Conditions: 150 mM KOAc, 10 mM MgCl2 and 150 mM bicine (pH 8.5), 24 C. Structure probing data (DMS and 2A3) for a 170-nucleotide construct. For 2A3, 1,521 sequencing reads were counted. It was measured as part of the RMDB library 15KLIB.
RNA sequence: GGGAACGACUCGAGUAGAGUCGAAAAUGUUAUUGGUGUUUAUCAUAAACUUGGAGAACGUGUACGCCAAGCUAUCUUAAACACUGUUAAAUUUUGUGACCACAUGGUCAAGGCUGGUUUAGUCGGUAUGCAGCGGCCUUCGGGCCGCUGAAAAGAAACAACAACAACAAC
Reactivity to DMS in 0.01 (KOAc 150mM, MgCl2 10mM, bicine 150mM(pH8.5), 24C), signal-to-noise 3, nucleotides 027 to 129: u030g020u030u000a050u040u000g020g030u040g000u000u050u000a010u000c100a020u040a000a000a000c000u000u040g090g000a070g070a160a300c240g040u150g030u070a130c190g050c000c000a010a010g060c060u020a000u000c240u020u020a000a000a060c000a030c030u060g000u020u010a000a030a150u010u010u010u010g100u030g000a140c030c010a070c110a210u020g060g020u040c020a080a000g000g020c050u010g010g070u000u040u060a040g000u000c070g020g010u020a000u020g060
Reactivity to 2A3 in 0.01 (KOAc 150mM, MgCl2 10mM, bicine 150mM(pH8.5), 24C), signal-to-noise 1, nucleotides 027 to 129: u100g030u070u060a050u000u060g000g040u040g030u000u000u070a000u000c040a000u060a000a010a130c020u000u000g030g020a120g030a200a000c090g000u100g190u230a000c020g000c010c000a010a010g040c000u000a000u000c000u030u020a000a000a000c000a030c000u000g080u000u000a020a070a140u020u080u000u110g100u000g040a000c000c000a000c010a020u300g000g000u000c050a030a030g000g000c010u000g000g050u200u030u080a020g000u000c070g030g000u000a010u050g050